[RMDB]
RNA sequence: GGGAACGACUCGAGUAGAGUCGAAAAUCGGUGGGGUUCGCCCCACCGAAAAGAGAGAAGUGAGAGAGUCGUCAGUGAACGAAAGUGCGAUCCCAGGCCACAAAAGAUGCGGCUUCGGCCGCAUCAACGAUAGAUCAUUCUUCGGAAUGAUCUAUCGAAAAGAAACAACAACAACAAC
Reactivity to 2A3 in 0.01 (KOAc 150mM, MgCl2 10mM, bicine 150mM(pH8.5), 24C), signal-to-noise 3, nucleotides 027 to 126: u030c010g000g000u010g010g000g010g000u050u030c130g080c010c010c000c000a000c010c000g000a010a010a010a000g080a000g010a000g020a150a040g070u110g050a110g010a010g000a020g090u000c000g010u010c050a060g080u030g200a090a030c040g060a120a020a050g080u080g020c010g000a030u010c010c010c000a010g030g030c010c000a050c020a020a140a020a040g000a000u010g010c000g000g000c000u020u080c200g080g000c000c000g020c000a000u010c000a000a000
Reactivity to DMS in 0.01 (KOAc 150mM, MgCl2 10mM, bicine 150mM(pH8.5), 24C), signal-to-noise 4, nucleotides 027 to 126: u000c000g000g030u000g000g000g000g020u000u020c220g020c000c000c000c000a010c000c000g000a000a010a040a090g010a150g000a070g010a120a080g030u010g000a100g010a110g000a070g000u000c030g020u010c050a090g010u000g000a060a100c070g000a070a040a100g020u000g010c030g010a090u000c010c010c020a120g000g000c040c040a090c180a060a080a060a090g010a020u000g010c010g010g010c010u000u020c170g020g000c040c010g000c000a000u000c010a030a050
Chemical mapping of a 177-nucleotide RNA with 2A3 and DMS. Conditions: 150 mM KOAc, 10 mM MgCl2 and 150 mM bicine (pH 8.5), 24 C. For 2A3, 5,304 sequencing reads were counted. The data come from the RNA Mapping Database (RMDB), library M2PK50. Reactivities are rounded to 0.1 and cut off at 0 and 3.